[RMDB]
This 177-nucleotide RNA was probed chemically with DMS and 2A3.
For 2A3 the reverse transcriptase was SuperScript II with manganese.
The DMS profile rests on 12,954 reads.
Conditions: 150 mM KOAc, 10 mM MgCl2 and 150 mM bicine (pH 8.5), 24 C.
RNA sequence: GGGAACGACUCGAGUAGAGUCGAAAAGUCGAUCAGUACUCAACGGAAUCAGGAGAAGAGCAGAUCGAACCUGACACCGAUGCCGGCUAUGACUCCGACCACUCCAGGGCAUCAAGAGGUUCAGCCACAAGGUACUGAUAUUCGUAUCAGUACCUUGAAAAGAAACAACAACAACAAC
Reactivity to DMS in 0.01 (KOAc 150mM, MgCl2 10mM, bicine 150mM(pH8.5), 24C), signal-to-noise 9, nucleotides 027 to 126: g020u010c020g020a070u000c050a100g010u000a110c040u000c040a100a140c070g010g010a130a110u000c080a050g000g000a090g000a130a160g000a040g020c180a110g010a080u000c040g010a140a130c030c020u010g010a050c120a110c100c040g010a070u000g010c070c040g010g000c070u000a070u010g000a060c050u000c040c030g000a070c050c050a080c070u000c030c050a090g000g000g010c020a030u000c060a040a060g010a040g000g000u000u010c050a090g000c060c070a160
Reactivity to 2A3 in 0.01 (KOAc 150mM, MgCl2 10mM, bicine 150mM(pH8.5), 24C), signal-to-noise 7, nucleotides 027 to 126: g030u010c010g040a070u050c040a020g050u090a100c030u010c050a050a050c030g030g030a070a070u080c020a070g060g040a070g040a180a030g020a040g020c100a030g030a200u050c020g000a010a030c020c000u020g010a020c020a040c070c040g010a010u050g030c020c020g040g000c020u060a070u220g040a040c020u000c040c020g070a080c020c020a050c010u030c020c010a050g050g000g000c000a050u030c040a070a040g050a040g110g010u030u050c030a020g020c020c000a040